RNA sequence: GGGAACGACUCGAGUAGAGUCGAAAAAGAACAGAAACAGCAAUAAGACUGCGUGGCUACAUUUUCCCAGUGCCACCAACUGGGAUUUAAGCUGACUAACAUUUUGAAAGCCCAGCCCAUUUCAUUCCCGAGGGAAAAUUUUCGAAUUUUCCCUCGGAAAAGAAACAACAACAACAAC
Reactivity to 2A3 in 0.01 (KOAc 150mM, MgCl2 10mM, bicine 150mM(pH8.5), 24C), signal-to-noise 1, nucleotides 027 to 126: a000g050a130a010c040a070g050a040a100a000c000a000g030c000a090a270u140a250a070g120a080c060u050g010c020g040u080g020g030c050u180a030c020a100u130u100u040u010c000c000c010a000g020u000g010c010c010a060c000c000a000a080c000u000g000g020g000a000u090u070u020a060a010g000c080u000g090a070c000u080a090a030c010a120u090u080u050u180g090a140a000a010g010c000c000c020a030g000c000c000c000a140u050u090u030c000a030u000u010c030